[RMDB]
RNA sequence: GGGAACGACUCGAGUAGAGUCGAAAAGAUAUGGAUGCCCAGGAUCCAGAUAGGCUACGGUAAUUCGUACUGAGUCGGAAACGACUUUACGUGCCAGUAGCUAUCUGGAUCCUGGGCAUCCUAAGUCCUUUCUAACUAUGUUCGCAUAGUUAGAAAGAAAAGAAACAACAACAACAAC
Reactivity to DMS in 0.01 (KOAc 150mM, MgCl2 10mM, bicine 150mM(pH8.5), 24C), signal-to-noise 5, nucleotides 027 to 126: g010a140u000a300u010g000g010a000u000g000c000c000c000a010g000g010a010u000c000c000a010g000a010u000a050g030g010c010u010a000c000g000g000u010a050a260u010u010c000g030u000a030c300u010g000a010g010u000c000g000g000a140a130a300c020g010a020c000u000u000u010a010c000g040u000g010c000c000a140g030u000a010g000c000u000a000u000c000u000g000g000a000u000c000c000u000g000g000g000c000a000u000c010c000u000a010a090g000u010c030